[RMDB]
RNA sequence: GGGAACGACUCGAGUAGAGUCGAAAAUGGUAUACCUGCCGGUCGAAGCUCAGGAUGCGCUGUUCGACAACAUCACCGCGUUGAGUGCUCCCGGUAGUCGGCUGGCGUUCGAAUUCGUGCCGGAUACUACCGAGAUACUUUUCGAAGUAUCUCGGUAAAAAGAAACAACAACAACAAC
Reactivity to 2A3 in 0.01 (KOAc 150mM, MgCl2 10mM, bicine 150mM(pH8.5), 24C), signal-to-noise 4, nucleotides 027 to 126: u070g060g030u110a080u060a200c020c040u030g040c020c000g000g020u020c040g030a020a020g030c050u020c100a070g060g040a100u090g000c100g040c030u040g120u120u120c040g070a050c030a070a050c040a110u200c040a010c020c030g030c030g090u080u130g100a110g050u120g060c040u030c010c020c000g010g020u020a040g000u010c020g020g000c030u010g030g000c000g010u010u050c020g040a050a050u060u030c020g030u110g030c000c000g000g000a040u070a090c030
Reactivity to DMS in 0.01 (KOAc 150mM, MgCl2 10mM, bicine 150mM(pH8.5), 24C), signal-to-noise 5, nucleotides 027 to 126: u010g020g010u010a120u010a130c060c020u000g030c010c000g010g010u010c040g000a030a150g010c120u010c040a130g010g000a030u010g030c020g020c040u000g000u000u000c050g020a100c030a100a090c140a130u000c120a060c110c070g010c140g010u010u000g010a080g020u010g010c090u000c040c030c020g020g020u010a050g010u000c020g000g020c010u010g000g010c030g000u000u000c020g000a060a120u000u000c050g020u000g020c000c000g010g000a140u020a050c090

This 177-nucleotide RNA was probed chemically with 2A3 and DMS. The data come from the RNA Mapping Database (RMDB), library OK2TRN. High 2A3 reactivity points to a flexible backbone, as in loops and unpaired stretches. Conditions: 150 mM KOAc, 10 mM MgCl2 and 150 mM bicine (pH 8.5), 24 C. DMS adducts were read by reverse transcription with MarathonRT. For 2A3 the reverse transcriptase was SuperScript II with manganese.